[RMDB]
RNA sequence: GGGAACGACUCGAGUAGAGUCGAAAAGACACACUAGACACCUCCCAGGUCCUCGUGUGUACCUGGUUGAGAGGCUCAUUGCUUGUGAAAAUCCAUUCAUGGUUAACCAAUUGGCUUAUAGCUCUAGGAUACAUGGACCGUUCGCGGUCCAUGUAUCAAAAGAAACAACAACAACAAC
Reactivity to 2A3 in 0.01 (KOAc 150mM, MgCl2 10mM, bicine 150mM(pH8.5), 24C), signal-to-noise 1, nucleotides 027 to 126: g040a030c010a010c000a000c060u020a000g030a010c010a050c050c020u000c000c000c000a000g010g010u000c000c000u070c080g120u100g020u000g000u070a030c000c010u000g000g010u080u170g050a110g000a030g070g020c010u000c030a090u020u060g060c080u100u080g020u010g020a130a000a000a050u000c040c030a100u050u020c020a050u080g020g000u040u070a020a000c020c000a000a090u060u040g010g030c040u130u050a080u140a100g020c000u030c020u060a030g100
Reactivity to DMS in 0.01 (KOAc 150mM, MgCl2 10mM, bicine 150mM(pH8.5), 24C), signal-to-noise 1, nucleotides 027 to 126: g000a050c040a010c040a090c010u000a090g000a060c060a120c050c040u000c010c010c050a090g000g060u010c010c020u000c220g010u010g000u010g010u000a070c010c010u000g020g020u000u000g020a030g000a070g000g000c140u000c170a010u000u000g010c030u000u030g020u010g000a060a060a110a120u000c050c040a020u000u000c100a070u000g010g020u010u000a070a220c080c000a040a100u010u010g000g000c060u000u000a110u010a070g010c040u000c010u000a090g010

The data come from the RNA Mapping Database (RMDB), library 15KREP.
Structure probing data (2A3 and DMS) for a 177-nucleotide construct.
The RNA was probed in 150 mM KOAc, 10 mM MgCl2 and 150 mM bicine (pH 8.5) at 24 C.